[RMDB]
RNA sequence: GGGAACGACUCGAGUAGAGUCGAAAAAGAGCGGCGGUGGUACCUCAUUCAGUGCACUUGGGAAGGUCUGAGGAAGCCGACAAUCUCUAAGCGGGAGUCCCUCUCAAGAGGGAGCUCGGGGACCAGACCUUACUAUUUACUUCGGUAAAUAGUAAGGAAAAGAAACAACAACAACAAC
Reactivity to 2A3 in 0.01 (KOAc 150mM, MgCl2 10mM, bicine 150mM(pH8.5), 24C), signal-to-noise 9, nucleotides 027 to 126: a000g050a010g010c030g030g000c020g010g040u070g040g080u140a120c000c000u010c010a030u060u030c030a030g130u050g200c060a040c140u140u170g060g020g040a060a050g050g000u010c010u010g010a020g020g020a060a010g010c000c000g030a030c020a040a100u030c010u000c010u060a070a050g060c040g010g020g010a030g120u020c010c020c000u000c010u020c060a150a100g000a010g010g000g000a010g000c000u010c000g010g000g010g020a020c000c010a010g030a050
Reactivity to DMS in 0.01 (KOAc 150mM, MgCl2 10mM, bicine 150mM(pH8.5), 24C), signal-to-noise 9, nucleotides 027 to 126: a050g000a050g020c300g000g010c060g010g010u000g010g010u020a110c020c030u000c040a030u010u000c050a070g000u010g020c050a090c120u010u020g020g020g000a120a100g000g000u000c030u000g010a050g000g010a240a280g030c030c020g010a030c030a050a160u010c010u000c020u010a090a110g010c070g000g000g010a060g010u000c000c000c000u010c010u000c200a110a150g000a030g000g010g000a020g010c030u000c000g000g000g010g000a250c020c030a080g010a240